RNA sequence: GGGAACGACUCGAGUAGAGUCGAAAAUCAAAGCCGCCCUUGUAGCUCAGUGGUAGAGCGCUUCACUCGUAUUCCAAUACUGCCAUGAAGAGGUCCGCGGUUCAAUCCCGCGUGGUGGCAAAAAAAAGUUAGUACAUGUGUUCGCACAUGUACUAACAAAAGAAACAACAACAACAAC
Reactivity to 2A3 in 0.01 (KOAc 150mM, MgCl2 10mM, bicine 150mM(pH8.5), 24C), signal-to-noise 1, nucleotides 027 to 126: u090c020a070a020a040g000c000c020g000c010c020c010u010u130g080u120a020g040c000u000c110a030g010u020g090g030u080a040g010a000g060c040g020c010u130u080c020a080c070u060c040g040u060a100u110u060c020c030a030a060u050a130c020u040g030c000c010a030u080g060a110a060g050a000g060g060u000c030c010g000c010g000g000u040u000c010a000a040u060c000c010c000g000c000g010u010g030g010u000g000g000c000a000a010a000a030a030a020a020a070
Reactivity to DMS in 0.01 (KOAc 150mM, MgCl2 10mM, bicine 150mM(pH8.5), 24C), signal-to-noise 2, nucleotides 027 to 126: u000c050a070a120a170g000c050c040g020c010c000c300u020u000g000u000a070g030c020u000c040a100g020u000g040g010u000a040g010a060g000c010g000c060u000u010c050a040c080u000c090g020u000a080u000u030c120c120a060a100u000a060c050u010g000c050c080a050u000g010a100a040g010a040g000g000u000c140c020g000c000g000g010u010u010c130a050a300u000c220c010c000g000c030g020u020g020g040u000g000g000c010a000a000a000a080a060a040a100a060
Structure probing data (2A3 and DMS) for a 177-nucleotide construct. The reactions ran in a buffer of 150 mM KOAc, 10 mM MgCl2 and 150 mM bicine (pH 8.5), at 24 C. For DMS the reverse transcriptase was MarathonRT. Reactivities are rounded to 0.1 and cut off at 0 and 3.